[RMDB]
RNA sequence: GGGAACGACUCGAGUAGAGUCGAAAAAAAGUGUACGAAAGAACAAAGAAGCAAACAAACCGAGUAGUGAAAUGAUGGCUUCAGUCCAAAAUGGGCAAACACUACAGACGGAGCCAAAGGCAAUUAAUCUACUUCUCCUAUUCGUAGGAGAAGUAGAAAAAGAAACAACAACAACAAC
Reactivity to 2A3 in 0.01 (KOAc 150mM, MgCl2 10mM, bicine 150mM(pH8.5), 24C), signal-to-noise 3, nucleotides 027 to 126: a000a000a000g070u040g000u040a040c050g060a090a010a070g030a110a000c030a060a070a040g050a020a010g040c030a060a050a110c010a040a080a040c030c030g000a030g010u040a010g010u030g040a070a070a140u130g060a020u080g070g000c010u080u040c050a020g040u040c010c010a020a200a080a160u130g020g010g000c000a020a070a010c030a010c020u050a010c010a020g080a020c040g020g020a030g010c010c020a040a030a010g050g000c020a020a030u060u070a060a020
Reactivity to DMS in 0.01 (KOAc 150mM, MgCl2 10mM, bicine 150mM(pH8.5), 24C), signal-to-noise 3, nucleotides 027 to 126: a070a030a050g010u000g040u000a050c040g000a070a070a050g010a100a060c100a050a060a090g010a070a050g020c060a060a050a070c110a020a050a120c060c030g000a080g030u000a020g010u000g000a050a070a050u000g000a120u000g020g000c020u000u000c050a080g010u000c020c040a030a070a060a080u000g020g000g000c070a050a040a080c020a020c030u000a030c160a090g010a080c020g030g010a050g010c020c030a010a050a060g000g000c100a070a050u020u000a080a130